[RMDB]
RNA sequence: GGGAACGACUCGAGUAGAGUCGAAAAGAAGCUGUCUUCGGACAGCUUCGGUUUAUUUCGUGUAAUCGUCGAGUCCUUCCCAUGAUUACAUGAAAUAAUUUGCUGUCUGCGGAUUCGUCCGCAGAAACUAUAGCACCUUAUUCGUAAGGUGCUAUAGAAAAGAAACAACAACAACAAC
Reactivity to DMS in 0.01 (KOAc 150mM, MgCl2 10mM, bicine 150mM(pH8.5), 24C), signal-to-noise 7, nucleotides 027 to 126: g000a010a010g020c000u000g010u000c000u000u010c210g020g000a010c000a000g010c000u000u000c000g000g000u000u000u000a010u000u000u000c000g020u000g000u000a010a010u000c010g020u010c140g000a050g000u000c050c100u000u000c010c010c020a080u010g000a010u000u000a010c010a010u000g000a010a010a020u000a010a020u000u000u000g010c080u000g000u000c000u000g010c000g010g000a040u000u010c210g010u000c000c000g010c000a000g000a010a050a150
Reactivity to 2A3 in 0.01 (KOAc 150mM, MgCl2 10mM, bicine 150mM(pH8.5), 24C), signal-to-noise 6, nucleotides 027 to 126: g000a000a000g000c000u000g020u010c010u030u100c250g080g000a000c000a000g010c000u000u000c000g000g000u000u020u010a020u000u000u010c010g000u020g010u030a020a030u010c060g110u020c080g050a020g040u030c010c010u020u020c010c010c000a020u060g000a000u010u030a010c010a010u040g020a010a010a020u050a020a060u090u120u170g110c070u080g040u080c000u000g000c000g010g010a010u030u040c170g050u020c050c000g000c000a000g000a000a000a000

Background
Source: RMDB library M2PK50, as collected in RNAgym. The record gives the reactivity of an RNA of 177 nucleotides to DMS and 2A3. For DMS, 24,740 sequencing reads were counted. Reactivities are given for positions 27 through 126. 2A3 adducts were read by reverse transcription with SuperScript II with manganese.